[RMDB]
An RNA of 177 nucleotides, treated with DMS and 2A3 and read out base by base.
The reactions ran in a buffer of 150 mM KOAc, 10 mM MgCl2 and 150 mM bicine (pH 8.5), at 24 C.
Values are in units of 0.01, from 0 to 300, in steps of 10.
For 2A3 the reverse transcriptase was SuperScript II with manganese.
RNA sequence: GGGAACGACUCGAGUAGAGUCGAAAAGUUCUGGUGCACAGUCCAGAACAGAAAGCUGUGCAAAAGCUGAUGUCGAUAAGAUAUCAGCAGUGAGCCAGACAUACGAUACGUAUGUCUGGCUCACGAACGUAAUGGUACGGUUCGCCGUACCAUUACGAAAAGAAACAACAACAACAAC
Reactivity to DMS in 0.01 (KOAc 150mM, MgCl2 10mM, bicine 150mM(pH8.5), 24C), signal-to-noise 1, nucleotides 027 to 126: g070u060u010c000u020g000g000u010g010c000a000c010a020g000u040c000c000a000g000a110a130c220a160g010a020a060a090g050c000u000g000u010g000c050a140a000a140a100g000c000u010g000a000u000g020u000c000g010a040u130a140a120g000a000u000a000u000c000a000g020c000a010g000u000g000a000g070c000c050a030g020a030c030a000u000a000c000g050a170u000a080c300g190u000a020u030g000u000c050u020g000g130c020u000c000a000c000g040a080a200
Reactivity to 2A3 in 0.01 (KOAc 150mM, MgCl2 10mM, bicine 150mM(pH8.5), 24C), signal-to-noise 6, nucleotides 027 to 126: g080u120u050c000u000g010g020u080g010c000a000c000a010g010u040c010c000a000g010a110a010c000a010g030a000a020a000g020c000u000g000u010g010c020a050a050a030a080g000c000u000g000a000u000g000u000c010g050a160u070a300a100g000a010u010a040u010c000a000g000c000a020g000u000g000a000g000c000c000a000g000a000c000a000u010a000c000g300a280u120a300c260g000u000a000u000g000u000c000u000g000g000c000u000c000a000c000g000a000a000